[RMDB]
RNA sequence: GGGAACGACUCGAGUAGAGUCGAAAAUCCUAAGUCACGUUGAAAAAAUUUGACGAUGAAAUAAGAGGGAGGGAUCGGAAACGAUCCCUUUGAUCUCUUAUGGAGUCAACCGCAGCUACGUGAUAUGGAAAAAACUGAGUGAUUCGUCACUCAGUAAACGCUAUGUUCGAUUCGUCGAACAUAGCGUAAAAGAAACAACAACAACAAC
Reactivity to DMS in 0.01 (KOAc 150mM, MgCl2 10mM, bicine 150mM(pH8.5), 24C), signal-to-noise 1, nucleotides 027 to 156: u000c000c000u020a060a170g030u000c000a000c010g030u020u010g000a000a060a090a190a050a080u020u000u000g030a060c000g000a140u010g030a160a160a040u010a000a000g000a050g000g000g010a020g000g010g030a010u000c000g010g000a230a100a300c020g020a000u000c000c000c030u010u010u010g000a040u020c000u010c030u000u000a060u000g000g040a230g010u030c000a030a010c190c130g000c120a130g010c000u000a030c000g000u000g010a000u010a100u000g000g000a000a090a070a100a110a070c010u000g000a030g080u000g010a030u000u000c300g030u000c000a010c000u020c000a010g010u000a000a150
Reactivity to 2A3 in 0.01 (KOAc 150mM, MgCl2 10mM, bicine 150mM(pH8.5), 24C), signal-to-noise 2, nucleotides 027 to 156: u020c000c000u020a080a000g010u000c000a000c010g010u030u090g220a120a060a030a020a160a260u110u090u050g020a050c080g010a200u030g000a020a020a000u010a010a000g010a000g000g040g000a000g040g000g000a000u000c000g010g050a080a040a010c000g010a000u020c000c000c000u020u010u000g000a020u000c000u020c000u020u000a000u020g000g030a010g000u000c010a050a060c080c070g140c080a140g070c040u070a020c000g000u010g000a000u020a080u070g040g000a030a150a040a060a030a010c000u000g000a020g000u000g000a010u020u070c130g040u010c100a000c000u010c000a000g010u000a020a060
An RNA of 207 nucleotides, treated with DMS and 2A3 and read out base by base. For DMS the reverse transcriptase was MarathonRT. It was measured as part of the RMDB library RNAMAK. Reactivities are given for positions 27 through 156.